[RMDB]
RNA sequence: GGGAACGACUCGAGUAGAGUCGAAAAUGGCGCUAUUUUGGAGACUGUGGUAGCAUUGAUUAUGUUCGCAUUGUUCGUGAUCCAAAAACCAAUCUUGGAAAGGGCUUUGCCUAUAUACAGUUUAAGGAUACCAUGGGGGUUGAUAAGGCACUCCUCAAUAAUUAAUCGUAUUCGUACGAUUAAUUAUAAAAGAAACAACAACAACAAC
Reactivity to 2A3 in 0.01 (KOAc 150mM, MgCl2 10mM, bicine 150mM(pH8.5), 24C), signal-to-noise 5, nucleotides 027 to 156: u060g030g010c030g010c060u050a070u100u110u070u110g040g010a050g020a020c020u030g020u030g060g030u060a030g040c040a040u030u070g050a060u110u150a040u100g020u030u080c020g000c050a040u020u060g020u070u060c060g050u070g030a060u020c030c000a010a030a030a060a090c040c020a050a080u070c070u060u040g020g010a040a070a030g040g010g010c000u070u070u090g020c010c010u060a060u010a010u030a140c020a020g000u050u070u060a050a010g040g000a030u020a120c040c040a040u090g010g010g020g030g000u040u030g040a100u020a110a010g040g000c010a010c020u020c000c010u060c010a020
Reactivity to DMS in 0.01 (KOAc 150mM, MgCl2 10mM, bicine 150mM(pH8.5), 24C), signal-to-noise 4, nucleotides 027 to 156: u010g010g010c040g010c020u000a050u000u000u000u000g020g020a110g010a080c040u000g020u010g030g020u000a060g030c020a090u000u010g010a090u000u000a050u000g020u000u000c040g030c040a080u000u010g030u010u000c050g010u010g000a150u000c030c040a030a050a090a090a130c080c090a090a110u000c070u010u000g010g000a060a130a240g000g010g020c020u000u000u010g020c020c010u010a060u000a100u000a080c090a100g010u000u010u000a050a120g020g010a140u000a040c040c040a080u000g010g000g020g020g010u000u000g010a080u000a060a090g010g000c050a050c050u000c010c000u000c040a100